[RMDB]
RNA sequence: GGGAACGACUCGAGUAGAGUCGAAAAGAAAAUACAAGGCUGUCAAAACCCUGUCCCAACCUCCACGUGGUGUCGGCUGGAUAAUGCUGCAUUAUGUUGCAUUUAUCAACUGGGAAGGGCAAAAAAACUACAACUUUACGUUCGCGUAAAGUUGUAGAAAAGAAACAACAACAACAAC
Reactivity to DMS in 0.01 (KOAc 150mM, MgCl2 10mM, bicine 150mM(pH8.5), 24C), signal-to-noise 1, nucleotides 027 to 126: g010a130a060a120a080u020a100c040a040a010g000g000c010u030g030u040c050a050a210a080a090c070c030c020u000g010u000c000c000c000a090a140c020c010u000c030c040a090c160g000u000g000g000u000g000u000c020g010g000c060u030g010g000a020u000a000a000u000g000c000u000g010c030a130u010u000a080u030g030u000u000g000c010a010u010u010u020a000u010c040a070a000c150u010g010g000g000a090a050g010g000g040c040a000a000a020a040a000a010a020
Reactivity to 2A3 in 0.01 (KOAc 150mM, MgCl2 10mM, bicine 150mM(pH8.5), 24C), signal-to-noise 2, nucleotides 027 to 126: g010a000a020a000a010u140a040c040a000a090g030g030c040u060g020u070c040a030a040a130a230c000c000c020u000g150u030c000c010c000a000a050c000c000u060c020c020a120c090g140u160g020g010u030g030u020c020g070g020c010u070g040g010a010u010a020a010u010g000c010u010g000c000a040u120u160a150u300g000u010u010g000c010a000u000u020u140a040u080c040a050a030c030u020g000g000g040a000a010g000g020g000c030a020a090a000a000a000a000a000